An RNA of 177 nucleotides, treated with 2A3 and DMS and read out base by base. For DMS, 876 sequencing reads were counted.

[RMDB]
RNA sequence: GGGAACGACUCGAGUAGAGUCGAAAAUGCUGACCUGUGUCUUCUGGACCCUGGAGUACGGAAUGGUGGUGGGCAUCGUCUUCAAUGCGCUUUUCCUGCUCUACAAGAGCAUGAAGCCGCAGUUUUAGUCAUGGUGAGCAUUCGUGCUCACCAUGACAAAAGAAACAACAACAACAAC
Reactivity to 2A3 in 0.01 (KOAc 150mM, MgCl2 10mM, bicine 150mM(pH8.5), 24C), signal-to-noise 1, nucleotides 027 to 126: u090g000c030u050g040a060c000c010u060g030u040g030u130c000u020u100c040u120g080g070a140c040c000c000u020g120g100a110g000u080a030c090g030g050a030a030u170g050g010u000g000g000u000g020g050g000c020a040u020c040g060u000c010u190u130c060a070a170u070g010c010g000c000u120u110u070u050c000c070u000g000c040u040c000u040a140c060a170a000g100a030g020c010a030u010g000a000a000g000c030c010g000c020a080g000u020u010u070u090a040
Reactivity to DMS in 0.01 (KOAc 150mM, MgCl2 10mM, bicine 150mM(pH8.5), 24C), signal-to-noise 1, nucleotides 027 to 126: u000g000c020u000g020a080c110c080u000g010u000g010u010c040u000u000c070u050g070g000a150c020c010c050u010g000g000a080g040u000a040c030g000g000a050a040u000g020g010u000g000g010u000g010g000g000c050a040u000c050g010u000c010u000u000c130a070a140u000g000c020g000c070u000u000u000u000c020c020u000g000c000u000c010u000a130c300a100a230g000a000g000c000a010u000g000a010a040g000c300c010g010c020a020g000u000u000u000u000a090